[RMDB]
RNA sequence: GGGAACGACUCGAGUAGAGUCGAAAACAUAAUAUGCCGGAUGCACACGGCUGACCGUUUGACACACAUAUUUUGAAUGGUGUUUUGUGCAUGACGUAAUUACUGCUUCGGACACCUCCAUAUAUUCGGACUGACCUAGGUUCGCCUAGGUCAGUCCAAAAGAAACAACAACAACAAC
Reactivity to 2A3 in 0.01 (KOAc 150mM, MgCl2 10mM, bicine 150mM(pH8.5), 24C), signal-to-noise 2, nucleotides 027 to 126: c010a010u190a120a030u100a300u200g010c000c000g030g030a000u000g000c050a000c000a000c000g020g000c070u090g030a080c030c020g030u090u110u280g070a140c060a000c000a000c000a000u160a300u050u070u050u250g300a040a090u080g000g090u000g000u000u010u010u010g000u000g000c000a000u000g000a000c030g020u050a060a000u020u070a280c000u040g080c000u000u070c020g000g000a000c050a050c000c000u000c000c050a170u020a000u030a010u110u220c000
Annotation: Conditions: 150 mM KOAc, 10 mM MgCl2 and 150 mM bicine (pH 8.5), 24 C. An RNA of 177 nucleotides, treated with 2A3 and read out base by base. The data come from the RNA Mapping Database (RMDB), library OK1LIB.